An RNA of 177 nucleotides, treated with DMS and 2A3 and read out base by base. It was measured as part of the RMDB library RFMREP. 2A3 is a SHAPE reagent: it acylates the 2'-hydroxyl of flexible nucleotides of all four kinds. For DMS the reverse transcriptase was MarathonRT.
RNA sequence: GGGAACGACUCGAGUAGAGUCGAAAAUGCAAACUCCUUGGUCACACACACAUACGGCGCGGAAGGCGUGUUUGCUGACGUUUCCAUUCCCUUGUUUCAAUCAUUGGUUAAUCCCUUGAUUCCUUUGACCCUUUAAAAUCUUCGGAUUUUAAAGGGUAAAAGAAACAACAACAACAAC
Reactivity to DMS in 0.01 (KOAc 150mM, MgCl2 10mM, bicine 150mM(pH8.5), 24C), signal-to-noise 4, nucleotides 027 to 126: u010g010c080a060a050a100c060u000c030c020u000u010g010g010u000c060a070c050a070c070a060c080a060c100a070u000a090c100g000g000c040g020c070g010g020a070a110g000g010c110g000u000g010u020u000u010g010c010u010g010a180c080g000u000u000u000c020c020a260u000u000c000c010c000u000u000g010u010u000u000c130a070a060u000c010a020u000u000g010g000u010u000a080a110u010c110c030c040u010u000g000a080u000u000c120c010u000u000u010g000
Reactivity to 2A3 in 0.01 (KOAc 150mM, MgCl2 10mM, bicine 150mM(pH8.5), 24C), signal-to-noise 2, nucleotides 027 to 126: u100g010c040a110a020a080c020u050c010c020u040u030g050g040u080c000a040c000a010c000a010c000a010c000a110u080a200c110g010g020c020g010c050g060g100a060a020g040g000c040g020u040g100u030u050u070g070c020u010g060a020c010g000u000u010u000c010c010a030u020u030c030c010c000u000u040g050u020u030u030c030a040a020u000c000a020u010u040g010g020u080u120a080a060u090c000c010c040u010u040g020a040u090u130c000c010u050u030u070g040